[RMDB]
RNA sequence: GGGAACGACUCGAGUAGAGUCGAAAAUCUGCACACGAACAUGCCCAACGUGAACGAGUUUAUGUUCACCAACUCGUUCCGGGCCAAGCUUAUGGUGGCACACGAGACCAACAAGGACCCCGUUUACGAGUGGGUAGAGCUGACGCUGCCGGAGGGGGAAAACAGACAAAUUCGUUUGUCUGUUUUCAAAAGAAACAACAACAACAAC
Reactivity to 2A3 in 0.01 (KOAc 150mM, MgCl2 10mM, bicine 150mM(pH8.5), 24C), signal-to-noise 4, nucleotides 027 to 156: u010c020u060g020c040a010c010a010c090g050a130a010c030a090u100g000c000c000c020a080a050c080g070u120g030a020a000c000g000a030g010u030u070u070a180u170g080u110u150c040a050c100c020a030a010c010u000c000g000u000u010c010c010g000g010g000c020c030a080a020g030c020u140u100a070u180g030g000u020g010g030c040a000c000a000c130g050a040g060a130c020c050a030a070c050a060a070g080g020a090c020c000c000c000g050u050u050u080a070c070g020a050g060u080g010g030g010u020a050g010a000g040c030u040g000a030c020g010c070u030g030c000c010g040g020a040g000g010g000g000
Reactivity to DMS in 0.01 (KOAc 150mM, MgCl2 10mM, bicine 150mM(pH8.5), 24C), signal-to-noise 2, nucleotides 027 to 156: u000c030u000g040c030a160c040a080c030g030a060a070c050a150u020g000c030c010c000a100a140c070g040u000g000a030a010c210g010a070g010u010u000u000a120u010g030u010u020c070a170c060c020a030a070c010u000c010g010u000u010c030c030g020g050g000c060c050a090a130g000c040u000u010a120u000g010g040u000g000g000c020a040c090a040c080g020a180g010a130c050c010a050a070c040a070a190g000g020a110c040c000c000c000g000u000u010u000a060c070g010a150g010u000g000g030g060u000a110g010a070g050c020u010g010a130c050g020c040u000g000c020c020g020g010a080g020g020g000g010
An RNA of 207 nucleotides, treated with 2A3 and DMS and read out base by base.
DMS adducts were read by reverse transcription with MarathonRT.
For 2A3 the reverse transcriptase was SuperScript II with manganese.
The reactions ran in a buffer of 150 mM KOAc, 10 mM MgCl2 and 150 mM bicine (pH 8.5), at 24 C.
The 2A3 profile rests on 3,422 reads.
The DMS profile rests on 4,663 reads.
Reactivities are given for positions 27 through 156.